[RMDB]
RNA sequence: GGGAACGACUCGAGUAGAGUCGAAAAGAUAUGGAUGGACUCCCCACCGCAUGUGCCGUUGAAAUCGGAAACGAUGGAGGCAUACAUGCGAGGUCCAUCCUAAGUCAAACAGCGGUUCGCCGCUGAAGCAGCAAAUGACGUUCGCGUCAUUUGCUGCAAAAGAAACAACAACAACAAC
Reactivity to DMS in 0.01 (KOAc 150mM, MgCl2 10mM, bicine 150mM(pH8.5), 24C), signal-to-noise 1, nucleotides 027 to 126: g000a070u000a220u000g010g050a000u020g000g000a000c000u000c290c000c040c020a300c140c000g020c000a000u000g000u000g000c030c020g050u000u010g000a080a210a060u000c000g090g000a180a060a150c020g000a000u000g000g020a200g010g010c000a140u050a000c000a010u010g010c020g030a040g000g040u000c000c000a010u000c000c000u000a010a050g000u040c110a200a030a300c070a020g000c000g000g060u000u000c150g000c000c000g000c000u010g010a000a050
Structure probing data (DMS) for a 177-nucleotide construct. Conditions: 150 mM KOAc, 10 mM MgCl2 and 150 mM bicine (pH 8.5), 24 C.